Conditions: 150 mM KOAc, 10 mM MgCl2 and 150 mM bicine (pH 8.5), 24 C. An RNA of 177 nucleotides, treated with DMS and 2A3 and read out base by base. It was measured as part of the RMDB library OK1LIB. The 2A3 profile rests on 27,163 reads.
RNA sequence: GGGAACGACUCGAGUAGAGUCGAAAACGGGGUACGAUGUAUAGUAAUAAUACUCCGGAGAUACUGUCUCGUACCCAUAGACUGCGUCUGAGAUGUUCCGGAGUAUUAUUCUCGGAUACGUGGUCAAGGUACUCGUAGAUUUCGAUCUGCGAGUACCAAAAGAAACAACAACAACAAC
Reactivity to DMS in 0.01 (KOAc 150mM, MgCl2 10mM, bicine 150mM(pH8.5), 24C), signal-to-noise 4, nucleotides 027 to 126: c090g000g000g000g010u000a000c000g010a030u020g010u070a010u010a020g010u010a070a120u020a060a060u000a010c000u000c000c000g000g020a180g020a140u030a040c030u010g000u000c010u000c000g020u000a010c000c000c010a030u010a060g000a010c010u000g010c030g000u000c010u000g000a020g000a060u030g000u010u010c000c000g000g000a010g010u000a010u020u010a080u030u010c000u010c000g000g000a090u020a030c020g040u010g000g020u010c010a130a140
Reactivity to 2A3 in 0.01 (KOAc 150mM, MgCl2 10mM, bicine 150mM(pH8.5), 24C), signal-to-noise 7, nucleotides 027 to 126: c020g010g000g000g000u000a000c000g010a010u020g120u090a010u010a010g030u020a020a110u040a080a010u010a060c000u000c000c000g000g010a050g010a010u160a020c000u010g000u000c000u000c000g000u000a000c000c000c000a000u020a000g010a000c010u010g000c000g000u000c010u010g000a010g000a000u050g050u130u030c000c000g000g000a000g000u010a010u040u080a050u040u010c010u000c000g020g000a020u020a070c010g000u010g000g000u000c010a010a040